Record summary: An RNA of 177 nucleotides, treated with 2A3 and DMS and read out base by base. Values cover nucleotides 27 to 126. For 2A3 the reverse transcriptase was SuperScript II with manganese. The RNA was probed in 150 mM KOAc, 10 mM MgCl2 and 150 mM bicine (pH 8.5) at 24 C. For 2A3, 2,328 sequencing reads were counted. Values are in units of 0.01, from 0 to 300, in steps of 10.
RNA sequence: GGGAACGACUCGAGUAGAGUCGAAAAUAAGCGUGUAGGGCGUGACCUAGGCAAAUCCGGGUCACAUUCAGCCUGAGACGUGAUGCGUAGCCGAUUGAGGCGAAUUCAGUGAUCCUAUGCUGCCGAGCAAAGAUCAGAACUUCGGUUCUGAUCUUUGAAAAGAAACAACAACAACAAC
Reactivity to 2A3 in 0.01 (KOAc 150mM, MgCl2 10mM, bicine 150mM(pH8.5), 24C), signal-to-noise 2, nucleotides 027 to 126: u100a020a010g010c000g010u000g000u010a020g000g000g040c030g000u000g000a000c020c000u090a240g020g000c120a140a060a070u140c010c000g000g020g000u040c000a000c000a000u130u150c080a020g010c000c000u010g010a030g020a020c000g010u000g000a040u110g000c050g060u060a030g000c000c050g150a210u040u300g060a070g040g020c020g010a010a020u050u070c020a000g030u010g050a040u040c000c000u040a050u030g020c000u040g000c010c060g070a050g010
Reactivity to DMS in 0.01 (KOAc 150mM, MgCl2 10mM, bicine 150mM(pH8.5), 24C), signal-to-noise 3, nucleotides 027 to 126: u000a100a290g010c000g000u000g020u000a300g020g010g020c020g030u000g000a020c000c010u000a100g050g010c130a080a080a110u020c050c050g000g010g020u000c000a000c000a100u000u000c260a190g010c020c020u000g000a180g000a030c020g000u020g000a060u010g000c120g000u000a150g010c000c020g000a080u000u000g010a100g010g020c010g000a100a070u000u000c060a060g040u010g000a040u000c030c000u000a040u000g010c040u010g030c130c050g010a120g000